The record gives the reactivity of an RNA of 177 nucleotides to DMS and 2A3. The reactions ran in a buffer of 150 mM KOAc, 10 mM MgCl2 and 150 mM bicine (pH 8.5), at 24 C. The data come from the RNA Mapping Database (RMDB), library OK2TRN.
RNA sequence: GGGAACGACUCGAGUAGAGUCGAAAACAAAAGUUAACAUAUUUAAAAGAACUUGGUGAAGAUGACGAAUAUAAAUAUGUUGCCAAAAUAGAUAGUAAAACAUCUAAAUUAUGUCAUUCACUCAACGUCUAGAUUCAGGAUUCGUCCUGAAUCUAGAAAAAGAAACAACAACAACAAC
Reactivity to DMS in 0.01 (KOAc 150mM, MgCl2 10mM, bicine 150mM(pH8.5), 24C), signal-to-noise 2, nucleotides 027 to 126: c020a050a140a120a180g010u000u000a030a030c030a030u000a000u000u000u020a010a060a150a110g010a130a080c100u010u020g000g020u010g000a010a050g010a120u000g000a050c000g010a170a070u000a160u000a000a030a000u000a010u000g020u000u020g000c020c020a140a070a060a160u000a020g000a000u000a020g000u000a090a050a130a140c130a000u000c000u000a040a100a140u020u010a040u030g010u010c000a030u000u000c000a000c000u010c270a040a060c300g000
Reactivity to 2A3 in 0.01 (KOAc 150mM, MgCl2 10mM, bicine 150mM(pH8.5), 24C), signal-to-noise 2, nucleotides 027 to 126: c000a000a190a080a050g060u090u080a000a000c010a000u070a070u020u060u090a190a240a030a050g060a120a060c130u180u120g070g000u030g030a070a050g070a170u090g020a000c010g070a160a030u190a010u000a130a040a000u020a000u020g000u000u020g070c020c030a100a050a050a020u090a010g000a010u020a030g030u070a110a080a000a000c010a010u000c010u020a050a120a100u260u200a060u290g010u000c010a010u020u030c010a000c000u160c060a040a050c020g030